The data come from the RNA Mapping Database (RMDB), library M2RFOK. This 207-nucleotide RNA was probed chemically with 2A3 and DMS. DMS adducts were read by reverse transcription with MarathonRT. Reactivities are given for positions 27 through 156. The RNA was probed in 150 mM KOAc, 10 mM MgCl2 and 150 mM bicine (pH 8.5) at 24 C. For 2A3, 5,859 sequencing reads were counted. For 2A3 the reverse transcriptase was SuperScript II with manganese.
RNA sequence: GGGAACGACUCGAGUAGAGUCGAAAAUCAUGCUGGCCAACCCAACCCCACGAUCCUCCAUCGGCAUGAUCAUGAUGUGUUCUCAAAUAUCAGGCCAGUAAAUCACCAUGCUCGUGCUGGUAAAGGCAACUUAUGCCCAAGUUCGCUUGGGCAUAAACUAUGAUAAGCUAUUCGUAGCUUAUCAUAGAAAAGAAACAACAACAACAAC
Reactivity to 2A3 in 0.01 (KOAc 150mM, MgCl2 10mM, bicine 150mM(pH8.5), 24C), signal-to-noise 6, nucleotides 027 to 156: u080c050a040u110g010c000u010g030g000c010c010a020a070c090c010c040a050a100c030c020c020c010a070c100g050a140u100c010c040u060c050c030a030u020c010g020g000c010a000u010g010a010u000c000a000u010g080a060u100g030u010g050u080u020c050u010c040a070a100a020u270a070u120c060a050g000g010c010c000a000g010u030a020a070a040u120c010a010c020c000a010u020g000c000u000c000g030u020g000c010u010g000g010u040a140a100a010g040g020c020a050a020c040u020u020a010u010g000c000c000c000a010a000g010u040u080c130g030c090u000u010g030g000g000c000a010u000a000a000a000
Reactivity to DMS in 0.01 (KOAc 150mM, MgCl2 10mM, bicine 150mM(pH8.5), 24C), signal-to-noise 2, nucleotides 027 to 156: u000c080a080u000g030c040u020g000g030c040c010a180a210c080c030c040a050a200c040c010c000c030a090c180g010a130u000c000c000u000c020c070a040u000c020g010g000c010a020u000g010a030u000c020a030u000g020a040u010g020u020g020u000u010c020u000c030a080a090a140u010a150u010c100a120g000g030c010c010a070g030u000a000a070a080u010c030a030c010c000a050u000g000c130u000c020g050u000g040c010u000g000g010u010a020a050a040g010g030c100a060a070c100u010u000a000u000g020c000c000c000a020a050g030u000u000c240g020c000u000u010g000g010g020c020a000u000a000a030a170